[RMDB]
RNA sequence: GGGAACGACUCGAGUAGAGUCGAAAAGCUUUUUCAGAGAAAGAGCAUGUGUCGUUGCUCAACGAUCUCAGCGAGUCUAAUUUGGCAUCAAUACUAGGCUGCCUCCAAUACUUUUCUGGCCUGUUCAAUCGUGGUAGGUAUUCGUACCUACCACGAUAAAAGAAACAACAACAACAAC
Reactivity to 2A3 in 0.01 (KOAc 150mM, MgCl2 10mM, bicine 150mM(pH8.5), 24C), signal-to-noise 3, nucleotides 027 to 126: g000c010u080u020u000u000u060c150a170g150a020g020a210a030a000g030a000g030c030a060u120g060u020g060u070c040g040u010u070g080c030u020c060a020a030c040g030a050u050c040u000c040a070g000c040g020a020g010u010c040u040a110a160u110u060u070g040g000c010a040u040c050a100a090u080a170c050u030a050g050g040c020u000g040c000c000u050c020c020a080a020u100a180c050u070u130u060u020c030u080g040g020c010c020u030g050u040u120c050a030
Reactivity to DMS in 0.01 (KOAc 150mM, MgCl2 10mM, bicine 150mM(pH8.5), 24C), signal-to-noise 4, nucleotides 027 to 126: g010c020u010u000u010u010u010c040a280g020a210g010a040a040a030g000a020g010c020a080u010g010u010g020u000c050g000u000u010g010c070u000c060a060a100c080g000a070u000c050u010c030a100g020c080g010a060g010u010c040u000a060a120u000u000u010g000g030c080a050u000c050a060a090u010a100c150u000a040g010g020c030u000g010c040c020u000c030c030a070a100u000a050c090u010u000u000u000c040u000g010g020c030c030u010g000u000u000c120a080
Source information: Chemical mapping of a 177-nucleotide RNA with 2A3 and DMS. The 2A3 profile rests on 2,845 reads. The data come from the RNA Mapping Database (RMDB), library OK2TRN. For 2A3 the reverse transcriptase was SuperScript II with manganese. Conditions: 150 mM KOAc, 10 mM MgCl2 and 150 mM bicine (pH 8.5), 24 C.